RNA sequence: GGGAACGACUCGAGUAGAGUCGAAAAUGAUGAAGGGUUUAAAUACAAGUCCCUUGUGUUCUAAUGCCUGGUUGGCUGGUUUUAGUGAUGGUGAUGCAAAUUUUCUUCUAGAAAUCUCUAAGCCCCGCGUGCGAUUAGUAUUCGUACUAAUCGCACGAAAAGAAACAACAACAACAAC
Reactivity to DMS in 0.01 (KOAc 150mM, MgCl2 10mM, bicine 150mM(pH8.5), 24C), signal-to-noise 2, nucleotides 027 to 126: u020g000a090u000g020a120a070g010g020g000u000u000u000a010a070a070u000a080c120a080a090g000u010c010c020c020u000u020g000u000g000u000u000c110u000a100a090u010g000c020c000u000g020g000u000u010g010g010c020u010g010g010u010u010u000u000a070g020u010g000a050u010g010g000u000g010a060u000g040c100a040a080a150u010u010u010u000c010u000u010c060u020a100g010a050a040a110u010c050u000c040u010a090a180g010c040c000c010c120g020